[RMDB]
RNA sequence: GGGAACGACUCGAGUAGAGUCGAAAAGAUAUGGAUGAUGGGACAUGUCCGAACAUCGGAAACGAUGUACGGACAACAGCCCAUAUCCUAAGUCAAAGGGUACUCUACGUUCGCGUAGAGUACCCAAUCUCCGUCUAUAGUUCGCUAUAGACGGAGAAAAAGAAACAACAACAACAAC
Reactivity to 2A3 in 0.01 (KOAc 150mM, MgCl2 10mM, bicine 150mM(pH8.5), 24C), signal-to-noise 3, nucleotides 027 to 126: g020a020u070a030u140g030g000a030u200g070a020u030g140g000g020a070c090a200u130g010u000c010c010g010a010a010c000a000u010c010g010g010a060a070a030c010g000a000u000g000u020a030c000g020g010a000c010a010a010c000a010g050c000c000c000a000u010a000u010c000c000u010a070a020g040u020c060a090a080a090g010g000g000u000a000c000u030c000u000a000c010g030u040u060c300g010c000g190u000a000g000a000g000u000a010c000c000c000a000a000
Reactivity to DMS in 0.01 (KOAc 150mM, MgCl2 10mM, bicine 150mM(pH8.5), 24C), signal-to-noise 4, nucleotides 027 to 126: g010a050u000a300u010g000g000a010u010g010a020u000g010g000g020a040c090a250u010g030u000c000c010g010a130a020c000a000u000c000g010g000a070a080a170c010g030a010u000g010u000a050c010g000g010a010c000a010a040c170a170g010c000c000c000a010u000a020u000c000c000u000a040a150g010u000c040a060a110a160g000g000g010u000a000c000u000c000u000a000c000g000u000u000c230g020c010g010u000a010g000a010g000u000a000c000c000c000a000a010
An RNA of 177 nucleotides, treated with 2A3 and DMS and read out base by base. For 2A3 the reverse transcriptase was SuperScript II with manganese. As a SHAPE reagent, 2A3 marks flexible, mostly unpaired nucleotides at the ribose 2'-OH. Conditions: 150 mM KOAc, 10 mM MgCl2 and 150 mM bicine (pH 8.5), 24 C.